An RNA of 177 nucleotides, treated with DMS and read out base by base. The reactions ran in a buffer of 150 mM KOAc, 10 mM MgCl2 and 150 mM bicine (pH 8.5), at 24 C. Source: RMDB library TTRDEL, as collected in RNAgym.
RNA sequence: GGGAACGACUCGAGUAGAGUCGAAAAGAUAUGGAGUGUCGCAUCGAUCAACGGGUCGGAAACGACCCUGGGUUGGGAGCGACCUCCUAAGUCAAAAGUCUUCUUAUCGUUCGCGAUAAGAAGACAAUCGAGAAGCUAACUUCGGUUAGCUUCUCGAAAAAGAAACAACAACAACAAC
Reactivity to DMS in 0.01 (KOAc 150mM, MgCl2 10mM, bicine 150mM(pH8.5), 24C), signal-to-noise 2, nucleotides 027 to 126: g020a050u000a300u000g000g000a000g010u010g010u000c010g030c000a110u000c010g000a010u000c000a060a180c120g000g010g000u000c000g000g000a110a050a210c000g000a000c010c000c010u000g000g000g000u000u000g040g000g000a070g000c020g000a010c000c000u000c000c000u010a030a050g000u010c030a140a040a110a170g010u000c000u000u000c000u000u000a000u000c000g010u000u020c300g020c010g010a030u000a000a000g000a000a030g000a000c030a010a020